Source information
An RNA of 207 nucleotides, treated with 2A3 and read out base by base. Reactivities are given for positions 27 through 156.
[RMDB]
RNA sequence: GGGAACGACUCGAGUAGAGUCGAAAAGAUAUGGAGUAAAGACAUGGAUUAUGUAAGUCCGACGAAGAGGCUCGGAAACGAGCCUCAGAGGAUUAUGUAAAUCCAACAGCUUUACUCCUAAGUCAAAGCGAUUUGACGAUUCGUCGUCAAAUCGCAACACUAUGAAGGACUUCGGUCCUUCAUAGUGAAAAGAAACAACAACAACAAC
Reactivity to 2A3 in 0.01 (KOAc 150mM, MgCl2 10mM, bicine 150mM(pH8.5), 24C), signal-to-noise 1, nucleotides 027 to 156: g020a010u070a020u150g010g000a000g000u010a010a000a000g010a020c040a140u050g000g010a010u010u010a000u010g020u040a040a180g230u020c050c000g010a120c030g000a240a020g010a000g000g000c000u010c020g000g040a020a080a050c000g000a000g050c000c000u000c000a000g000a000g000g000a000u020u000a010u000g010u010a010a090a240u000c000c000a010a020c050a020g030c000u000u000u000a000c000u020c000c000u000a040a000g010u010c050a070a060a000g010c000g000a000u030u000u050g000a000c030g000a020u090u240c300g100u000c000g000u010c150a020a000a000u000c000g000c010a000a000